The record gives the reactivity of an RNA of 177 nucleotides to DMS and 2A3. Conditions: 150 mM KOAc, 10 mM MgCl2 and 150 mM bicine (pH 8.5), 24 C. The DMS profile rests on 1,724 reads. 2A3 adducts were read by reverse transcription with SuperScript II with manganese. The 2A3 profile rests on 1,276 reads. Source: RMDB library RFMREP, as collected in RNAgym.
RNA sequence: GGGAACGACUCGAGUAGAGUCGAAAACUAGCUUGACUGUGUUUCAGCCAAUAGGGAACGCAGAUGCGAAAGCAGGGCCUAACGAACCACCUAGUUCCCUCUUUAUGAGGGCAGGUGAUAAGAGAGAUCCUUCUCAAUUGUUCGCAAUUGAGAAGGAAAAAGAAACAACAACAACAAC
Reactivity to DMS in 0.01 (KOAc 150mM, MgCl2 10mM, bicine 150mM(pH8.5), 24C), signal-to-noise 2, nucleotides 027 to 126: c050u010a080g020c060u000u010g000a170c000u000g020u010g000u000u000u000c010a130g020c160c160a090a100u000a170g000g010g000a010a030c020g030c020a020g000a070u010g010c190g010a090a030a070g000c040a210g000g000g000c020c030u000a090a090c090g000a130a090c110c010a010c010c000u000a030g010u000u000c000c000c000u000c000u000u020u000a070u010g020a010g010g000g030c070a000g000g010u000g000a000u000a040a150g000a090g000a110g010a150
Reactivity to 2A3 in 0.01 (KOAc 150mM, MgCl2 10mM, bicine 150mM(pH8.5), 24C), signal-to-noise 2, nucleotides 027 to 126: c020u050a090g020c020u040u120g030a080c010u020g040u000g010u030u020u050c050a080g060c100c020a140a120u130a220g080g000g010a010a030c020g000c050a010g010a200u200g000c030g100a080a000a000g030c020a030g000g020g050c000c000u060a070a050c020g030a000a000c030c000a000c000c000u020a050g020u120u120c020c070c000u010c000u020u220u050a230u300g010a000g000g010g000c000a000g000g010u010g010a030u050a060a020g030a000g000a000g000a040